[RMDB]
RNA sequence: GGGAACGACUCGAGUAGAGUCGAAAAGAUAUGGACACAGAAGAUCGAUAAGCUGCCUUCGGAAACGAAGGGCAGCUUUUGACGAUCCUGUGUCCUAAGUCAAAAGGAUCAUCUUCGGAUGAUCCAAGCUAAAUACUGACUUCGGUCAGUAUUUAGCAAAAGAAACAACAACAACAAC
Reactivity to DMS in 0.01 (KOAc 150mM, MgCl2 10mM, bicine 150mM(pH8.5), 24C), signal-to-noise 3, nucleotides 027 to 126: g000a010u000a160u000g000g010a040c010a000c000a000g010a180a120g010a010u000c000g010a160u010a010a040g010c000u000g010c000c000u000u010c000g010g010a030a030a060c010g010a010a020g010g010g020c000a000g010c010u000u000u000u000g010a190c080g000a010u000c010c000u000g020u000g010u000c000c000u000a000a060g000u010c030a100a100a170a100g010g010a010u000c000a000u000c000u000u000c240g010g000a010u000g000a000u000c000c000a020a040
Reactivity to 2A3 in 0.01 (KOAc 150mM, MgCl2 10mM, bicine 150mM(pH8.5), 24C), signal-to-noise 3, nucleotides 027 to 126: g010a010u030a000u040g000g010a000c010a000c020a010g230a300a070g010a290u020c060g080a190u100a300a020g010c020u010g000c000c010u010u000c000g000g030a070a010a010c010g010a010a020g100g010g010c010a000g000c010u000u010u000u010g020a010c000g000a000u000c000c020u010g010u010g000u000c000c000u000a010a000g000u010c020a030a030a030a230g010g000a000u000c010a010u000c010u070u140c300g140g000a010u000g000a010u000c010c000a010a000
The record gives the reactivity of an RNA of 177 nucleotides to DMS and 2A3.
The data come from the RNA Mapping Database (RMDB), library TTRDES.